[RMDB]
RNA sequence: GGGAACGACUCGAGUAGAGUCGAAAAAUCGGAUGAUUACGGUCCUUGCGGUAAAUCCGGCAUGUACAGGAUUCAUUGUCCUGCUCAAAGUCCAUGCCAUCAAACUGCUGGUUUUCAUUGAUGAUGCACCGGUGGUGGAAUUCGUUCCACCACCGGUAAAAGAAACAACAACAACAAC
Reactivity to DMS in 0.01 (KOAc 150mM, MgCl2 10mM, bicine 150mM(pH8.5), 24C), signal-to-noise 1, nucleotides 027 to 126: a060u000c030g000g010a100u000g010a080u000u000a040c100g050g000u000c110c040u000u000g030c000g010g000u000a050a100a170u010c190c020g030g000c070a000u000g050u010a040c030a060g000g000a020u000u000c300a080u010u000g000u000c000c030u000g010c030u010c140a030a040a070g000u010c080c010a100u000g000c050c030a030u000c160a070a110a080c040u020g000c040u000g000g000u000u010u000u000c030a060u000u000g010a080u010g000a090u000g010c160
Reactivity to 2A3 in 0.01 (KOAc 150mM, MgCl2 10mM, bicine 150mM(pH8.5), 24C), signal-to-noise 1, nucleotides 027 to 126: a000u030c010g100g020a040u050g040a030u030u110a060c090g070g030u000c070c010u050u100g010c000g050g010u110a030a050a140u050c070c000g000g030c020a030u020g040u050a030c000a070g000g000a040u100u180c000a020u160u290g020u040c000c000u000g090c080u110c120a070a100a010g020u000c030c010a000u000g080c000c000a030u050c050a100a090a000c020u060g010c000u080g050g050u080u030u030u040c030a020u000u040g110a080u040g010a020u180g000c090